Conditions: 150 mM KOAc, 10 mM MgCl2 and 150 mM bicine (pH 8.5), 24 C.
This 177-nucleotide RNA was probed chemically with DMS and 2A3.
For 2A3 the reverse transcriptase was SuperScript II with manganese.
DMS adducts were read by reverse transcription with MarathonRT.
The data come from the RNA Mapping Database (RMDB), library OK2TST.
RNA sequence: GGGAACGACUCGAGUAGAGUCGAAAAGAAAUCAGUCUGCGCGUCGACCUGCUCACUCAGCAAUCGGCCCGCGUCAGCCUUCAGUGCCGGACGCUUACCACUGGGCCAAUCUUCCAUGCCUUUAACCAUUUAACGACCAUUUCGAUGGUCGUUAAAUAAAAGAAACAACAACAACAAC
Reactivity to DMS in 0.01 (KOAc 150mM, MgCl2 10mM, bicine 150mM(pH8.5), 24C), signal-to-noise 4, nucleotides 027 to 126: g000a070a070a080u010c080a070g010u000c020u000g030c040g020c100g010u000c040g010a060c070c030u000g010c020u000c060a120c100u000c060a090g000c080a120a070u000c070g000g000c010c030c010g010c020g010u000c030a170g000c010c020u000u030c140a120g020u000g000c030c070g000g010a050c050g010c020u000u000a110c110c060a100c120u010g000g000g010c000c030a040a060u000c040u000u000c040c030a060u000g010c040c020u000u000u000a130a120c120c060
Reactivity to 2A3 in 0.01 (KOAc 150mM, MgCl2 10mM, bicine 150mM(pH8.5), 24C), signal-to-noise 3, nucleotides 027 to 126: g070a000a100a030u120c020a010g060u030c040u060g000c020g030c010g040u040c030g010a040c020c020u000g000c020u040c020a060c020u100c020a010g020c050a030a090u100c060g000g000c010c010c000g010c010g010u000c010a000g000c000c010u140u180c100a080g010u080g160c020c040g140g000a020c020g010c000u010u100a140c050c040a080c100u070g000g020g020c000c000a020a030u020c020u050u000c020c010a010u050g050c010c000u040u100u070a050a060c030c020